[RMDB]
RNA sequence: GGGAACGACUCGAGUAGAGUCGAAAAACCUUUGUGAUAAGUGGUUUCGCUUGGAUUUAUAUGUGAACCGGCAUGUGCCCAUUGGGCACAUGUCAAAACAUAUUGUCAGCGAAACGUAACAUCUUAUCACUCUGGUAAAGCGGAUGUUCGCAUCCGCCGCCCUGAUACUGUUCGCAGUAUCAGGGCGAAAAGAAACAACAACAACAAC
Reactivity to 2A3 in 0.01 (KOAc 150mM, MgCl2 10mM, bicine 150mM(pH8.5), 24C), signal-to-noise 2, nucleotides 027 to 156: a000c000c000u000u030u020g000u010g010a010u000a010a010g000u010g010g000u030u000u000c030g020c000u100u160g200g010a060u140u300u020a020u030a020u010g020u020g160a080a050c040c030g000g010c030a010u010g000u020g000c060c050c130a250u250u300g000g010g000c000a030c000a000u000g000u000c000a010a020a000a000c000a000u000a000u010u030g010u020c000a000g030c000g000a000a000a000c000g000u020a040a010c030a160u120c000u000u000a000u000c000a000c000u000c020u000g010g000u080a140a030a040g000c010g000g000a000u010g060u100u260c250g000c080a000u000c000c000g010c000